Structure probing data (2A3) for a 207-nucleotide construct. Source: RMDB library RNAMAK, as collected in RNAgym.
RNA sequence: GGGAACGACUCGAGUAGAGUCGAAAAGGGGUCGCUUGACAAGUCCGUCAUUGUCAGCUCAUUAGGCUGAAGCCUCCACGGCCUACCUCGGGAGCUUGGAUUUAUGACGGUCACCCAAGCGACGGAGGCACCCAAAAGUGUGGCUUCGGCCACACAACUGCUAUAUCUGCUUCGGCAGAUAUAGCAGAAAAGAAACAACAACAACAAC
Reactivity to 2A3 in 0.01 (KOAc 150mM, MgCl2 10mM, bicine 150mM(pH8.5), 24C), signal-to-noise 2, nucleotides 027 to 156: g180g040g020g020u010c020g000c020u020u010g010a050c060a140a030g000u000c000c000g020u010c000a030u010u070g070u160c220a080g000c000u000c010a040u010u050a000g000g030c010u020g020a060a010g050c000c000u010c010c000a010c010g000g000c000c010u000a040c040c080u140c160g180g150g010a040g040c090u220u300g210g000a070u120u140u060a040u050g000a010c000g010g000u060c010a030c000c010c000a000a000g000c000g020a020c000g000g000a000g000g000c010a060c000c000c000a060a110a020a070g020u010g000u000g000g010c030u010u100c290g100g000c000c000a000c010a000c000a000a020

2A3 adducts were read by reverse transcription with SuperScript II with manganese.